[RMDB]
RNA sequence: GGGAACGACUCGAGUAGAGUCGAAAACAUUCGCGUUCGCGCGAAUGAAAAAAGCGUACUACUCAUGUUAGGACAUGCGUCCCGGUCCCAAAUAGGACCGUCACGCAACAGCCUAACCGCUGAGUAUCGCAAAAAGCGUGAACUUCGGUUCACGCAACGAUACAUCCAUGUUCGCAUGGAUGUAUCGAAAAGAAACAACAACAACAAC
Reactivity to 2A3 in 0.01 (KOAc 150mM, MgCl2 10mM, bicine 150mM(pH8.5), 24C), signal-to-noise 3, nucleotides 027 to 156: c000a000u000u000c010g010c010g040u030u040c220g020c000g010c010g130a000a000u040g070a110a010a010a000a020a000g060c070g020u110a140c100u000a000c010u000c000a010u090g000u000u000a010g030g010a100c080a180u030g010c010g000u030c030c040c000g000g020u020c030c020c040a210a300a120u270a120g010g000a000c000c000g000u000c010a000c000g000c010a060a000c040a160g040c000c010u000a000a000c000c000g010c000u010g010a000g000u000a010u080c010g000c000a010a060a030a080a000g010c000g000u000g000a010a000c000u040u080c300g140g010u000u000c000a000c010g010c000a000a020
Reactivity to DMS in 0.01 (KOAc 150mM, MgCl2 10mM, bicine 150mM(pH8.5), 24C), signal-to-noise 2, nucleotides 027 to 156: c010a040u000u000c000g010c000g020u010u000c300g050c040g000c000g010a050a000u000g000a000a010a110a060a080a120g020c010g010u000a070c170u010a020c000u010c010a010u000g000u000u000a010g020g000a100c080a300u010g030c030g000u000c050c030c000g030g030u000c000c000c030a070a170a240u040a070g030g000a010c000c010g040u000c050a010c000g060c020a030a000c110a180g000c010c000u010a000a010c010c030g000c010u030g000a040g000u020a020u000c040g030c000a030a060a120a050a110g000c000g000u010g010a030a020c000u000u000c250g090g010u000u020c020a010c000g010c000a000a000